[RMDB]
RNA sequence: GGGAACGACUCGAGUAGAGUCGAAAACUAGCCAAUAUGGUGAAUCACCAUCUCUACUAAACAUACAGAAAUUAGCUGGGCAUGGUGGUGCGCGCCUACUCCCAGCUAUCGGGAGGCUGAGGCAGGAGAAUCACUAGAAUCAGGGAGGUGGAGGUUAGCUCAUAUGGUCAUUCGUGACCAUAUGAGCAAAAGAAACAACAACAACAAC
Reactivity to 2A3 in 0.01 (KOAc 150mM, MgCl2 10mM, bicine 150mM(pH8.5), 24C), signal-to-noise 2, nucleotides 027 to 156: c020u040a000g070c020c050a060a050u260a160u250g050g000u060g110a070a120u180c060a040c100c000a040u020c000u000c010u040a120c020u080a030a170a110c060a060u270a070c080a090g090a040a070a030u130u060a000g000c030u010g000g020g080c070a050u080g000g000u000g000g070u140g040c130g000c010g000c000c000u040a040c030u050c000c010c000a000g000c030u010a060u110c040g030g020g000a010g000g000c040u050g070a010g010g000c000a020g000g020a070g010a030a020u110c030a030c040u080a090g010a070a050u090c030a030g030g000g000a020g000g000u030g060g000a010g020g020u050u040a030
An RNA of 207 nucleotides, treated with 2A3 and read out base by base. Reactivities are rounded to 0.1 and cut off at 0 and 3. Conditions: 150 mM KOAc, 10 mM MgCl2 and 150 mM bicine (pH 8.5), 24 C. Source: RMDB library OK3TST, as collected in RNAgym.